[RMDB]
RNA sequence: GGGAACGACUCGAGUAGAGUCGAAAAAAGAAGUUGAUCACAACAAACAUAUACCCCUUUGUUUGACCGUGAAAAAUUUCUCCCAUCCCCUUUGUUUGUAUAAGAAAACCCGUUGUCUUCGGACAACCACUACAUAUAACUUCGGUUAUAUGUAGUGAAAAGAAACAACAACAACAAC
Reactivity to 2A3 in 0.01 (KOAc 150mM, MgCl2 10mM, bicine 150mM(pH8.5), 24C), signal-to-noise 2, nucleotides 027 to 126: a000a000g020a000a010g020u020u020g020a010u010c000a000c010a030a070c000a010a040a000c020a010u130a020u190a190c010c030c010c000u020u050u050g000u010u020u000g050a080c120c080g000u000g000a000a000a000a000a020u010u010u010c020u000c000c000c000a050u030c030c000c030c030u070u080u180g090u070u200u110g140u090a240u060a200a130g110a060a060a040a040c030c060c050g010u000u000g000u020c020u060u050c180g020g000a000c010a000a000c000
Reactivity to DMS in 0.01 (KOAc 150mM, MgCl2 10mM, bicine 150mM(pH8.5), 24C), signal-to-noise 6, nucleotides 027 to 126: a060a030g010a000a010g010u010u010g000a300u000c010a020c010a090a170c010a020a010a000c000a010u000a080u010a300c040c030c030c070u010u000u000g010u000u000u000g000a050c300c230g000u010g000a000a060a230a020a010u000u000u000c010u000c000c010c040a190u000c020c010c000c080u000u000u010g010u000u000u000g010u010a070u010a090a070g000a080a070a060a080c070c120c050g010u000u000g000u000c000u000u020c170g000g000a010c000a000a000c010
Conditions: 150 mM KOAc, 10 mM MgCl2 and 150 mM bicine (pH 8.5), 24 C. This 177-nucleotide RNA was probed chemically with 2A3 and DMS.